The record gives the reactivity of an RNA of 207 nucleotides to 2A3.
Values cover nucleotides 27 to 156.
For 2A3 the reverse transcriptase was SuperScript II with manganese.
RNA sequence: GGGAACGACUCGAGUAGAGUCGAAAAGGAACUCGGCAAACACAAACCCCGCCUGUUUACCAAAAACAUCACCUCUAGCAUUACUAGUAUUAGAGGCAAUGCCUGCCCAGUGACACCAGUUUAACGGCCGCGGUAUUCUGACCGUGCAAAGGUAGCAGGCCAUUAUAACGUUCGCGUUAUAAUGGCCAAAAGAAACAACAACAACAAC
Reactivity to 2A3 in 0.01 (KOAc 150mM, MgCl2 10mM, bicine 150mM(pH8.5), 24C), signal-to-noise 1, nucleotides 027 to 156: g030g000a080a060c060u080c070g000g020c070a160a060a070c030a060c010a060a200a040c020c010c010c010g000c040c000u030g040u050u090u050a080c060c060a030a080a000a000a000c090a030u050c030a010c010c000u000c010u010a060g080c060a150u130u240a250c080u010a030g050u050a100u060u040a060g000a020g030g000c020a010a010u010g000c000c020u020g000c000c000c000a030g000u010g000a010c020a010c040c020a050g000u000u000u130a100a000c060g000g040c000c030g000c020g000g010u040a200u010u160c070u080g100a040c010c000g000u000g050c030a200a000a000g020g000u010a030g000c110a030